[RMDB]
RNA sequence: GGGAACGACUCGAGUAGAGUCGAAAAGAUAUGGAUGGGAUGUACCAGCGAAGAACUGGCUCGGAAACGAGCCAGGGAGCUGACAUUCCCAUCCUAAGUCAAAGAACGUGUGUUCGCACACGUUCAACAUAUCUAUAGGGUUCGCCCUAUAGAUAUGAAAAGAAACAACAACAACAAC
Reactivity to 2A3 in 0.01 (KOAc 150mM, MgCl2 10mM, bicine 150mM(pH8.5), 24C), signal-to-noise 9, nucleotides 027 to 126: g030a020u060a030u140g000g000a000u000g010g010g000a000u010g040u120a280c180c120a060g020c040g270a300a040g010a050a010c000u000g000g010c000u000c000g010g020a050a060a040c010g000a000g020c000c010a000g000g010g000a000g000c020u030g050a010c000a000u110u130c010c000c000a010u000c000c000u000a010a000g000u000c040a130a040a220g000a010a000c000g010u000g000u010g030u090u130c300g110c070a000c000a000c000g000u000u010c000a000a000
Reactivity to DMS in 0.01 (KOAc 150mM, MgCl2 10mM, bicine 150mM(pH8.5), 24C), signal-to-noise 9, nucleotides 027 to 126: g000a040u000a300u010g000g000a010u000g010g010g010a020u000g010u010a160c300c080a020g020c010g000a110a190g000a130a240c000u000g000g010c000u000c000g000g000a080a080a180c010g010a010g020c000c000a000g000g000g000a060g020c010u000g010a040c010a030u010u010c000c010c000a000u000c000c000u000a010a070g000u000c030a120a140a180g000a010a000c000g020u000g020u000g010u000u010c290g020c010a010c000a000c000g010u000u000c000a100a210